[RMDB]
RNA sequence: GGGAACGACUCGAGUAGAGUCGAAAAGCCGCCGUAAACCCGAGGUUUCCAGGGCAACGUGUUUCGUCCCUGGGUUAGCCGGGACCUAAGCCGAGGCCGAGAGGCGUAGGCGAUGGACAUCAGGUUACAUCAAUUGCAAGUUCGCUUGCAAUUGAUGAAAAGAAACAACAACAACAAC
Reactivity to 2A3 in 0.01 (KOAc 150mM, MgCl2 10mM, bicine 150mM(pH8.5), 24C), signal-to-noise 1, nucleotides 027 to 126: g020c000c000g010c050c000g160u140a090a040a050c050c040c040g070a090g070g000u030u030u000c000c020a000g010g000g030c070a060a030c050g090u180g110u230u130u180c260g170u300c010c010c000u010g050g000g000u030u030a000g040c010c010g000g090g000a080c020c000u070a000a070g000c030c000g010a060g060g030c000c000g080a070g010a020g050g000c000g000u000a020g030g000c000g000a000u020g000g000a000c020a030u080c060a050g010g010u030u040a000
Reactivity to DMS in 0.01 (KOAc 150mM, MgCl2 10mM, bicine 150mM(pH8.5), 24C), signal-to-noise 2, nucleotides 027 to 126: g000c040c070g010c040c020g000u000a110a140a160c010c000c000g020a110g020g030u000u000u040c000c010a000g010g010g000c100a030a010c020g010u010g050u000u010u000c000g010u010c000c010c010u020g020g020g010u010u000a060g000c100c000g020g000g000a190c010c000u000a060a300g000c020c000g000a250g010g000c000c000g000a270g000a200g000g030c020g010u000a300g000g000c000g000a100u010g000g010a120c160a160u000c070a090g010g010u000u020a130